[RMDB]
RNA sequence: GGGAACGACUCGAGUAGAGUCGAAAAGAAGGAGAUGAAAGCGACUUUAGAAUCGGCUAACUGAGCAGGCAGAUCCAGACGGCAAGUAUCGUCGCCAGAGAUACAGUCGCAAAUAGCCGUAGGAGAAAUCAGCUAUCGGAUUCGUCCGAUAGCUGAUAAAAGAAACAACAACAACAAC
Reactivity to 2A3 in 0.01 (KOAc 150mM, MgCl2 10mM, bicine 150mM(pH8.5), 24C), signal-to-noise 3, nucleotides 027 to 126: g120a010a000g100g020a070g010a020u150g080a050a090a000g020c010g010a010c040u080u140u090a070g040a150a080u060c010g050g000c050u030a060a020c030u030g010a030g010c020a060g040g000c010a020g010a070u010c020c000a050g050a060c010g010g000c010a090a080g010u050a120u110c040g050u050c040g010c020c010a010g000a000g010a040u050a070c060a020g060u020c030g000c030a060a020a040u040a010g000c000c010g000u020a050g000g100a100g080a000a110
Reactivity to DMS in 0.01 (KOAc 150mM, MgCl2 10mM, bicine 150mM(pH8.5), 24C), signal-to-noise 3, nucleotides 027 to 126: g010a070a070g010g000a130g010a050u020g030a100a100a050g010c050g010a110c050u030u010u000a030g000a210a130u010c060g010g000c030u000a040a150c120u010g000a150g020c000a110g010g040c020a070g000a120u000c050c070a170g020a090c030g020g000c030a120a090g010u000a050u030c060g010u000c100g000c030c080a080g000a150g000a050u010a020c020a090g020u000c070g000c060a040a060a070u010a100g030c000c010g000u020a120g000g010a060g020a020a080
Conditions: 150 mM KOAc, 10 mM MgCl2 and 150 mM bicine (pH 8.5), 24 C. Structure probing data (2A3 and DMS) for a 177-nucleotide construct. For 2A3 the reverse transcriptase was SuperScript II with manganese. The DMS profile rests on 3,527 reads. DMS adducts were read by reverse transcription with MarathonRT.